Structure probing data (DMS) for a 177-nucleotide construct. The RNA was probed in 150 mM KOAc, 10 mM MgCl2 and 150 mM bicine (pH 8.5) at 24 C. DMS adducts were read by reverse transcription with MarathonRT. It was measured as part of the RMDB library RFMREP.
[RMDB]
RNA sequence: GGGAACGACUCGAGUAGAGUCGAAAAUUCAGAGGACAGCGGCAAACGGGGUAGUAAUGCAUAGGUAUGUACCCUCUGGUCGGGAAUAGCCACGGGAAACUGUGGGUAAUGCCCGAUGAUCUGGUGACACCAUAACCAUCUUCGGAUGGUUAUGGUGAAAAGAAACAACAACAACAAC
Reactivity to DMS in 0.01 (KOAc 150mM, MgCl2 10mM, bicine 150mM(pH8.5), 24C), signal-to-noise 1, nucleotides 027 to 126: u010u000c080a100g000a060g020g030a120c020a060g000c040g010g000c060a010a080a120c160g000g000g000g020u000a060g010u000a050a110u000g010c090a050u000a080g000g000u020a000u000g050u000a050c090c000c020u000c050u000g010g000u000c010g010g020g000a060a040u000a110g000c020c000a000c000g010g010g020a100a050a170c000u000g020u000g000g000g000u000a120a090u010g040c000c000c000g000a010u000g000a100u000c060u010g010g010u040g000a270